[RMDB]
RNA sequence: GGGAACGACUCGAGUAGAGUCGAAAACUGCGAGCUGGGCAAGGUAGGCGCCCUCCGGCCGGCCGACCUGCUGGAAACGCCGCUCGCAAUGGCAAGGGCGCGCAAGUCGUCCAUCGACCUGCACGGCCUAUGCGUAGGGUUUCGACCCUACGCAUAGAAAAGAAACAACAACAACAAC
Reactivity to 2A3 in 0.01 (KOAc 150mM, MgCl2 10mM, bicine 150mM(pH8.5), 24C), signal-to-noise 3, nucleotides 027 to 126: c030u020g000c010g010a000g000c050u290g040g050g040c050a110a110g030g000u020a010g020g000c000g000c010c010c010u020c030c020g030g000c020c000g060g010c030c010g200a300c000c010u030g040c020u030g010g050a060a110a040c130g040c030c000g000c010u000c000g000c000a010a060u110g040g020c070a070a110g030g000g020c010g000c010g000c020a020a010g020u030c010g030u040c080c040a080u140c010g030a050c000c010u030g000c030a030c020g080g000c020
Reactivity to DMS in 0.01 (KOAc 150mM, MgCl2 10mM, bicine 150mM(pH8.5), 24C), signal-to-noise 6, nucleotides 027 to 126: c110u000g010c010g010a020g020c020u010g050g010g020c020a170a150g000g000u000a030g010g030c040g000c080c010c070u010c100c070g010g010c070c140g000g020c090c050g000a130c010c010u000g000c020u000g020g000a060a160a110c210g000c010c030g010c000u000c010g010c010a020a040u010g020g010c120a100a120g000g000g010c010g010c040g000c020a020a030g010u000c000g000u010c220c240a090u010c010g000a030c000c040u010g010c010a060c020g010g000c020
Notes
An RNA of 177 nucleotides, treated with 2A3 and DMS and read out base by base. For DMS the reverse transcriptase was MarathonRT. The 2A3 profile rests on 5,662 reads.